[RMDB]
RNA sequence: GGGAACGACUCGAGUAGAGUCGAAAAGAUAUGGAGAUACUGAUGAGCAACAGCACGCGGUCGGAAACGACCGCCGUGACAUGCUUAAGGUAUCUCCUAAGUCAAAACGUGUGGUUCGCCACACGAAGCUUUAAUCAACGUUCGCGUUGAUUAAAGCAAAAGAAACAACAACAACAAC
Reactivity to DMS in 0.01 (KOAc 150mM, MgCl2 10mM, bicine 150mM(pH8.5), 24C), signal-to-noise 2, nucleotides 027 to 126: g000a000u000a300u020g000g000a030g010a020u000a010c000u000g020a220u000g000a010g010c000a020a010c240a270g020c000a000c000g000c010g000g000u000c000g030g000a080a130a110c000g020a000c000c000g010c140c070g020u000g000a060c080a230u000g000c000u010u000a150a300g000g050u000a000u000c000u000c000c000u000a010a090g000u000c040a120a050a130a260c010g010u010g000u010g000g010u000u000c300g000c000c000a010c000a000c010g010a030a080
Reactivity to 2A3 in 0.01 (KOAc 150mM, MgCl2 10mM, bicine 150mM(pH8.5), 24C), signal-to-noise 3, nucleotides 027 to 126: g030a010u070a050u130g010g010a020g010a000u010a000c010u040g210a280u300g030a170g010c020a030a180c030a240g060c010a010c010g000c000g000g000u000c000g040g000a100a100a050c000g010a030c000c000g000c010c000g010u000g040a050c000a100u110g030c000u000u030a010a040g030g000u000a000u030c010u000c000c010u000a000a000g010u000c000a020a010a050a130c010g000u030g000u000g000g130u080u080c300g100c120c000a010c020a010c000g020a030a020